[RMDB]
The record gives the reactivity of an RNA of 207 nucleotides to 2A3.
RNA sequence: GGGAACGACUCGAGUAGAGUCGAAAAGUCCCCAGUAUGACGUUAAACUGCUGACUCAUACAUACUGACACCGGUUGCUCAACAGGCUGUGUGGGAAAAUAGAAUAACAAGGCUGUCAAUUUGAGCUAAAACUCCUCGGGGUUCGCCCCGAGGAGAACGCAUACAAGUUCUUCGGAACUUGUAUGCGAAAAGAAACAACAACAACAAC
Reactivity to 2A3 in 0.01 (KOAc 150mM, MgCl2 10mM, bicine 150mM(pH8.5), 24C), signal-to-noise 1, nucleotides 027 to 156: g060u000c000c000c000c000a000g000u010a000u090g000a010c020g010u000u030a060a060a020c050u060g030c000u010g070a030c000u020c050a040u050a070c000a060u130a050c030u060g070a010c010a040c050c060g180g010u080u110g000c000u010c010a020a040c000a080g070g000c050u040g020u010g020u050g060g030g060a040a090a000a050u120a010g120a050a030u110a100a020c050a050a000g080g000c050u090g090u160c050a060a050u030u030u100g020a010g000c000u110a080a080a110a070c000u000c000c000u000c000g000g000g000g000u020u120c120g080c020c000c000c000g000a000g000g000a000g000a000a000
It was measured as part of the RMDB library M2RFPK. Conditions: 150 mM KOAc, 10 mM MgCl2 and 150 mM bicine (pH 8.5), 24 C.